[RMDB]
RNA sequence: GGGAACGACUCGAGUAGAGUCGAAAACCGUAGGAUUUGUUACAGCCUUGUGAGAACGAAGAACACGCUUUCGAAAGAGAGCGUGGGAGUUCCCAAGGAAGGUGGAAUCCUAAACGGAAAACCUAUCAGAAGUCACUUCGGUGACUUCUGAUAGGAAUCUAUUAAUGCCGUUCGCGGCAUUAAUAGAAAAAGAAACAACAACAACAAC
Reactivity to 2A3 in 0.01 (KOAc 150mM, MgCl2 10mM, bicine 150mM(pH8.5), 24C), signal-to-noise 3, nucleotides 027 to 156: c000c000g000u020a010g020g010a010u020u010u040g140u300u130a020c030a030g040c000c000u080u050g080u180g150a300g030a130a020c050g080a300a080g010a040a010c010a000c000g000c000u030u000u020c020g050a110a150a080g000a000g000a000g000c010g000u010g000g000g000a030g000u000u010c000c000c000a010a000g000g020a020a010g060g030u110g070g020a000a000u000c000c000u030a070a100a010c020g030g000a050a140a010a060c000c000u000a000u000c000a000g000a010a000g000u020c000a010c040u060u190c300g090g000u040g000a000c000u000u000c020u000g000a000u000a000g000g000a000a000
Reactivity to DMS in 0.01 (KOAc 150mM, MgCl2 10mM, bicine 150mM(pH8.5), 24C), signal-to-noise 1, nucleotides 027 to 156: c010c010g020u000a010g000g000a020u000u000u000g030u000u000a140c080a300g030c000c010u030u030g040u030g000a140g040a030a010c010g020a130a140g010a210a140c000a020c020g020c030u010u010u010c000g010a260a200a300g000a030g010a000g040c000g040u000g000g000g010a200g010u000u000c000c000c000a060a070g030g030a010a020g020g000u000g030g000a030a050u000c010c030u000a040a040a170c020g060g010a120a050a130a160c000c000u000a010u010c010a000g000a020a000g030u010c010a030c010u000u000c300g000g040u000g020a020c000u010u020c000u000g020a000u000a000g000g010a030a010
An RNA of 207 nucleotides, treated with 2A3 and DMS and read out base by base. The 2A3 profile rests on 2,279 reads. The data come from the RNA Mapping Database (RMDB), library RNAMAK. 2A3 adducts were read by reverse transcription with SuperScript II with manganese. DMS (dimethyl sulfate) methylates the pairing face of unpaired adenines and cytosines. Conditions: 150 mM KOAc, 10 mM MgCl2 and 150 mM bicine (pH 8.5), 24 C. Reactivities are rounded to 0.1 and cut off at 0 and 3.